[RMDB]
RNA sequence: GGGAACGACUCGAGUAGAGUCGAAAAUAAGAAGGCUGAGUCUGGUGAAGCAAGACUCUGCUGAUACAAUCCUCCUAGAGAACAGGGUGGGCGAGAGCAGCCCUCACUGGAGGACACCACGGGGCUGAAUACCUGGUUAAUUCGUUAACCAGGUAUUAAAAGAAACAACAACAACAAC
Reactivity to 2A3 in 0.01 (KOAc 150mM, MgCl2 10mM, bicine 150mM(pH8.5), 24C), signal-to-noise 9, nucleotides 027 to 126: u220a020a020g120a040a020g020g000c020u030g010a000g010u000c000u020g110g050u170g180a110a040g090c090a060a020g010a000c000u000c010u020g000c010u020g020a010u030a150c060a030a070u020c000c000u000c000c010u120a070g020a010g020a180a050c060a070g020g050g010u060g060g210g000c020g010a050g010a010g040c030a010g000c000c000c000u000c010a040c020u010g000g010a000g000g010a000c010a020c030c000a040c040g040g000g020g000c030u020g010
Reactivity to DMS in 0.01 (KOAc 150mM, MgCl2 10mM, bicine 150mM(pH8.5), 24C), signal-to-noise 9, nucleotides 027 to 126: u030a090a110g010a150a220g000g010c000u000g000a020g010u000c000u000g010g020u020g010a170a160g010c100a110a030g000a010c010u000c000u000g010c000u000g000a130u020a090c230a090a160u000c010c000u000c010c010u020a040g010a130g010a100a120c240a040g000g000g020u000g000g000g000c020g010a170g000a160g000c020a300g000c000c010c000u000c060a060c070u010g000g000a030g000g000a050c110a060c030c010a080c090g010g000g000g010c130u010g000
Structure probing data (2A3 and DMS) for a 177-nucleotide construct.
Values are in units of 0.01, from 0 to 300, in steps of 10.
Source: RMDB libraries RFM100 and RFMREP, as collected in RNAgym.